[RMDB]
RNA sequence: GGGAACGACUCGAGUAGAGUCGAAAAUGUGAAAUGACUUGAGAGGUGUAGGAUAAGUGGGAGCCCUCGGGCGCAAGUGAAAUACCACUACUUUUAACGUUAUUUUACUUAUUCCGUGGGUCGGAAGCUGUCUAGAGUUGUUCGCAACUCUAGACAGAAAAGAAACAACAACAACAAC
Reactivity to DMS in 0.01 (KOAc 150mM, MgCl2 10mM, bicine 150mM(pH8.5), 24C), signal-to-noise 1, nucleotides 027 to 126: u020g010u020g010a010a040a050u010g010a010c050u000u010g000a040g050a000g010g030u000g050u010a100g020g020a100u010a020a080g000u000g020g000g000a160g030c200c070c070u000c260g010g020g010c180g060c220a030a070g000u010g000a010a020a090u000a030c030c010a050c100u000a030c140u000u000u010u000a020a120c130g000u000u010a030u010u020u000u000a000c020u000u000a270u020u000c010c010g030u010g010g010g030u000c070g000g000a080a140g010